This 207-nucleotide RNA was probed chemically with 2A3. The RNA was probed in 150 mM KOAc, 10 mM MgCl2 and 150 mM bicine (pH 8.5) at 24 C. For 2A3 the reverse transcriptase was SuperScript II with manganese.
RNA sequence: GGGAACGACUCGAGUAGAGUCGAAAACUCCUCUCUGAAAAGGCAUGGAUAGUGUCUUAUUCCCAAUAAUUUACUCUUAUAUCAAAGGCUGCGAAUAGUAAUCUUUGUGGCCAUCGUGGCAUGAAGUGUAUGAAGUGCUUGGAAGACGAUGAGGAUGCUUACAUCGCUAUUUCGAUAGCGAUGUAAGAAAAGAAACAACAACAACAAC
Reactivity to 2A3 in 0.01 (KOAc 150mM, MgCl2 10mM, bicine 150mM(pH8.5), 24C), signal-to-noise 1, nucleotides 027 to 156: c040u010c010c020u040c020u000c040u160g060a070a060a050a010g000g020c030a020u100g000g080a160u090a230g020u010g010u000c000u040u010a120u020u020c030c030c020a030a030u170a050a040u080u140u090a120c020u050c010u160u130a120u070a090u230c080a180a010a020g050g000c010u020g010c010g040a040a020u040a100g120u100a120a130u000c040u010u040u050g020u030g050g000c000c000a060u030c050g010u010g000g000c000a050u020g050a040a010g020u020g000u080a040u090g060a090a010g050u020g060c060u040u070g010g030a020a080g030a030c000g030a010u040g000a010g030g000a010u050g010